[RMDB]
RNA sequence: GGGAACGACUCGAGUAGAGUCGAAAACAUAUGCUCUCCAUCUCUCAGCUGUGCGGGUGCCAAAAAGGAGGAAAUACAUACCGGUACGGCUCACGGUGCGGCAGUGUGGAGACCUGUUGUAAAGCGCGCGUACAGCUCUUUUCGAAGAGCUGUACGCAAAAGAAACAACAACAACAAC
Reactivity to 2A3 in 0.01 (KOAc 150mM, MgCl2 10mM, bicine 150mM(pH8.5), 24C), signal-to-noise 1, nucleotides 027 to 126: c000a050u100a060u190g060c000u000c000u000c000c010a150u050c030u000c000u000c080a000g000c040u030g000u000g000c020g120g000g000u040g000c030c000a020a060a060a030a060g040g080a050g050g150a000a100a000u210a000c110a030u050a100c000c080g010g020u060a010c090g000g000c000u000c000a120c000g150g000u040g020c000g020g000c030a010g000u000g000u010g040g010a010g040a000c000c010u030g010u020u000g040u000a140a110a000g100c170g000c000
Annotation: Chemical mapping of a 177-nucleotide RNA with 2A3. Reactivities are given for positions 27 through 126. The RNA was probed in 150 mM KOAc, 10 mM MgCl2 and 150 mM bicine (pH 8.5) at 24 C.